[RMDB]
Chemical mapping of a 207-nucleotide RNA with DMS and 2A3. Conditions: 150 mM KOAc, 10 mM MgCl2 and 150 mM bicine (pH 8.5), 24 C. The 2A3 profile rests on 2,005 reads. Values are in units of 0.01, from 0 to 300, in steps of 10.

RNA sequence: GGGAACGACUCGAGUAGAGUCGAAAACAAGGCUGUUCGCAGCCUUGAAAAACCGUAGGCUUUCUCCGAUUGGUCGUUGAAACAGGGUUCGAAAGAGCCCUGUGGAGACUAGAGGAGAGAAGCCUAAACGGAAAAAAUCGUGCCUUCGGGCACGAAACUUACCAGAUAUGUUCGCAUAUCUGGUAAGAAAAGAAACAACAACAACAAC
Reactivity to DMS in 0.01 (KOAc 150mM, MgCl2 10mM, bicine 150mM(pH8.5), 24C), signal-to-noise 2, nucleotides 027 to 156: c030a000a020g000g040c000u000g010u010u010c250g000c000a020g030c000c030u010u000g000a040a080a050a110a160c030c010g000u000a080g030g010c010u000u000u010c010u010c030c000g020a300u010u000g050g010u000c000g020u000u000g010a300a130a050c020a030g020g000g020u000u000c000g000a150a080a300g000a000g000c020c000c000u010g000u030g000g000a300g000a030c010u010a030g020a300g040g010a040g010a020g010a010a020g020c000c000u000a000a000a080c010g010g000a000a030a080a130a150a170u000c000g020u020g050c000c000u000u030c300g040g040g000c000a000c000g000a010a030a100
Reactivity to 2A3 in 0.01 (KOAc 150mM, MgCl2 10mM, bicine 150mM(pH8.5), 24C), signal-to-noise 2, nucleotides 027 to 156: c000a010a000g010g010c000u030g030u120u180c290g030c130a010g000c010c000u000u000g010a000a010a000a030a000c010c000g020u010a020g000g000c000u000u030u020c000u000c010c020g190a220u080u180g020g000u000c010g240u270u030g000a010a010a000c000a000g000g000g000u010u000c000g030a090a070a050g010a050g000c000c050c000u000g000u000g000g010a000g000a000c010u030a010g010a040g070g010a000g010a030g020a020a000g000c000c010u000a010a010a010c030g020g050a080a040a020a000a040a080u040c000g000u000g010c000c000u050u100c210g010g000g000c000a000c000g010a000a020a000